RNA sequence: GGGAACGACUCGAGUAGAGUCGAAAACAGAAGGUCAUAGACGGUCCACAGGACUUUGAUAUAUUUCUGGGAAGGGAUGAUGAAUUGGUUUUAGCAUUGAAAAGAAAUUGGUCAUGUGAUCGCAUUAUCGUAGAAGUUCAUUCGUGAACUUCUACGAAAAAGAAACAACAACAACAAC
Reactivity to 2A3 in 0.01 (KOAc 150mM, MgCl2 10mM, bicine 150mM(pH8.5), 24C), signal-to-noise 2, nucleotides 027 to 126: c060a030g100a110a040g010g000u070c030a030u060a090g100a040c070g020g020u020c020c040a170c030a160g010g010a020c000u130u070u110g020a020u040a000u020a030u150u060u000c030u010g020g000g070a000a070g000g030g070a020u040g020a020u040g020a100a110u090u090g150g000u070u040u030u090a010g000c010a020u030u120g050a070a020a010a060g100a050a080a060u100u030g040g020u040c030a050u130g080u080g050a020u030c010g000c040a060u140u130a050
Reactivity to DMS in 0.01 (KOAc 150mM, MgCl2 10mM, bicine 150mM(pH8.5), 24C), signal-to-noise 4, nucleotides 027 to 126: c070a090g010a090a090g020g020u000c060a050u010a070g010a140c130g000g010u010c030c030a110c150a120g020g020a030c030u000u000u010g000a100u010a080u000a060u000u000u000c010u010g010g010g020a080a100g010g000g000a060u000g000a070u010g000a050a060u000u010g010g000u010u000u010u000a070g010c050a080u000u000g000a050a050a090a070g000a030a030a090u000u000g000g000u000c030a080u010g010u000g000a050u010c060g020c140a080u000u000a080